[RMDB]
RNA sequence: GGGAACGACUCGAGUAGAGUCGAAAAGUCUGGUUUCGAGUUCGCUCGAAACCAGACAAAAAGAUAUGGAAUCCUGUUAUAGUUCAUUCGGAAACGAAUUGAAGUAACCUGAUUCCUAAGUCAAAAAGAUUGGUGGAUGUUCGCAUCCACCAAUCAAACCAUCUAUUUAGUUCGCUAAAUAGAUGGUAAAAGAAACAACAACAACAAC
Reactivity to 2A3 in 0.01 (KOAc 150mM, MgCl2 10mM, bicine 150mM(pH8.5), 24C), signal-to-noise 2, nucleotides 027 to 156: g010u010c000u000g050g010u000u000u000c000g010a010g000u060u140c190g160c130u020c000g000a000a000a000c000c000a000g000a000c000a010a020a000a000a000g020a010u030a010u010g000g000a010a010u000c000c000u030g030u000u030a100u050a100g210u010u010c000a010u000u000c020g020g030a040a100a090c010g030a020a010u040u160g000a010a000g010u000a000a010c020c040u000g000a000u000u010c000c000u010a050a030g040u030c030a060a010a020a080a140g000a000u000u000g000g030u000g020g000a000u000g020u120u180c280g020c080a000u020c000c000a000c000c000a000a000u000c000a010a000
Reactivity to DMS in 0.01 (KOAc 150mM, MgCl2 10mM, bicine 150mM(pH8.5), 24C), signal-to-noise 2, nucleotides 027 to 156: g000u000c000u010g020g020u010u010u010c000g010a000g010u010u000c300g000c020u000c010g010a040a020a000c000c000a010g060a000c000a000a030a050a120a110g020a110u000a300u000g010g000a030a010u010c020c030u000g000u010u000a030u000a050g020u000u000c010a060u000u000c010g030g000a160a150a260c050g000a020a040u010u000g000a030a300g000u000a020a020c000c050u000g000a010u000u000c000c000u010a030a100g010u020c040a050a030a170a120a130g000a020u000u000g020g040u000g000g010a030u000g000u000u010c300g010c020a010u000c000c000a000c010c000a000a000u000c000a020a090